[RMDB]
RNA sequence: GGGAACGACUCGAGUAGAGUCGAAAAAACCACUUCGGUGGUUAACGGGAUAUGGAGCCAGUGCCAGAGAGGGCUUGGAUUUACAGCUCGGAAACGAGCUGUUGUCAGCAUUCUCGGUAAUUCUGGCUCCUAAGUCAAUGGCCGAGUUCGCUCGGAACAUCAGGGUGUAUUUCGAUACACCCUGAUGAAAAGAAACAACAACAACAAC
Reactivity to 2A3 in 0.01 (KOAc 150mM, MgCl2 10mM, bicine 150mM(pH8.5), 24C), signal-to-noise 3, nucleotides 027 to 156: a010a000c010c000a020c030u090u050c300g120g000u010g000g010u020u020a110a050c080g090g050g020a050u050a040u210g010g000a000g020c000c000a000g020u040g010c000c060a080g010a010g010a000g060g050g010c040u100u170g150g000a020u110u170u180a000c000a000g000c000u000c000g020g020a080a090a020c010g000a000g000c000u000g000u010u000g010u000c010a010g000c010a040u020u010c000u000c000g000g000u010a030a010u170u040c010u000g010g000c000u000c000c000u000a010a000g000u000c010a010a140u170g150g000c020c000g000a020g020u050u130c150g050c120u000c000g020g020a040a050
Reactivity to DMS in 0.01 (KOAc 150mM, MgCl2 10mM, bicine 150mM(pH8.5), 24C), signal-to-noise 1, nucleotides 027 to 156: a030a010c010c000a000c000u000u010c250g080g010u000g030g030u000u000a000a030c060g000g000g000a130u000a150u000g000g000a050g050c000c020a010g050u000g030c040c010a200g020a120g010a060g040g000g020c010u000u000g010g020a060u000u000u000a050c000a000g030c000u020c010g000g020a190a140a250c010g000a000g020c000u010g010u000u000g010u000c010a060g020c000a070u000u000c000u010c020g020g010u010a010a060u000u000c010u000g010g010c010u000c020c000u010a000a050g020u010c090a130a120u000g020g030c020c010g010a050g010u000u010c200g000c020u000c010g010g000a080a170